[RMDB]
Conditions: 150 mM KOAc, 10 mM MgCl2 and 150 mM bicine (pH 8.5), 24 C. Structure probing data (2A3 and DMS) for a 177-nucleotide construct. The DMS profile rests on 10,723 reads. DMS adducts were read by reverse transcription with MarathonRT.

RNA sequence: GGGAACGACUCGAGUAGAGUCGAAAAGAUAUGGACUAUGACAUGCCUCGCAGUCGGAAACGACUGGACAGGCAACAGCAUAUGUCCUAAGUCAAAAGCUAUUGUGUGGUUCGCCACACAAUAGCAAGCCAUAAUAGUUGUUCGCAACUAUUAUGGCAAAAGAAACAACAACAACAAC
Reactivity to 2A3 in 0.01 (KOAc 150mM, MgCl2 10mM, bicine 150mM(pH8.5), 24C), signal-to-noise 7, nucleotides 027 to 126: g030a010u070a050u140g010g000a000c000u010a020u030g040a120c050a130u070g010c010c010u020c110g170c030a000g000u000c000g020g020a060a100a030c010g000a000c000u010g020g060a050c050a020g000g020c000a030a030c030a030g050c010a000u040a050u300g000u000c000c000u010a080a030g060u040c030a030a020a060a160g000c000u010a000u010u000g010u010g010u010g000g060u070u100c300g080c080c000a000c000a000c000a000a000u000a000g000c000a000a000
Reactivity to DMS in 0.01 (KOAc 150mM, MgCl2 10mM, bicine 150mM(pH8.5), 24C), signal-to-noise 7, nucleotides 027 to 126: g000a030u000a300u000g000g010a030c000u000a020u000g010a060c080a240u000g000c000c000u000c180g000c020a000g010u000c000g000g010a100a080a180c000g010a020c000u010g000g000a140c160a010g000g000c020a020a070c220a110g000c000a010u000a020u020g020u000c000c010u010a050a110g000u000c050a080a090a130a130g000c000u000a000u010u000g000u000g030u000g000g010u010u010c270g010c010c000a000c000a000c000a000a000u000a000g010c010a020a030